[RMDB]
RNA sequence: GGGAACGACUCGAGUAGAGUCGAAAAGAUAUGGAGACCUGAAGGCUUUUGACGGACAAUGGGUCGGAAACGACCCAUGUCCGAUAAGCCUGGGUCUCCUAAGUCAAAACCUGACUUCGGUCAGGAAGUAGGUAUGCAUGUUCGCAUGCAUACCUACAAAAGAAACAACAACAACAAC
Reactivity to 2A3 in 0.01 (KOAc 150mM, MgCl2 10mM, bicine 150mM(pH8.5), 24C), signal-to-noise 2, nucleotides 027 to 126: g000a010u060a020u140g000g040a010g000a010c070c080u190g300a260a080g050g000c070u170u160u170u300g300a210c020g000g000a010c010a270a300u040g030g030g000u010c020g010g000a000a060a010c000g000a030c010c010c010a000u010g030u000c010c010g000a000u000a020a010g020c000c000u000g000g010g010u000c000u010c000c000u000a000a010g010u000c010a020a000a080a240c000c000u000g000a000c000u020u140c300g150g000u000c010a010g000g030a020a020
Reactivity to DMS in 0.01 (KOAc 150mM, MgCl2 10mM, bicine 150mM(pH8.5), 24C), signal-to-noise 2, nucleotides 027 to 126: g000a070u010a300u000g010g000a000g020a030c000c010u000g010a130a050g080g000c000u020u010u020u000g020a240c240g010g000a000c010a070a060u020g010g000g000u010c000g000g000a060a070a180c020g030a020c000c000c020a010u000g000u000c000c000g010a020u000a010a030g010c010c010u000g000g000g000u000c000u010c000c000u000a010a090g010u010c030a160a070a180a090c010c000u000g000a010c010u000u020c180g030g010u000c000a010g000g000a020a070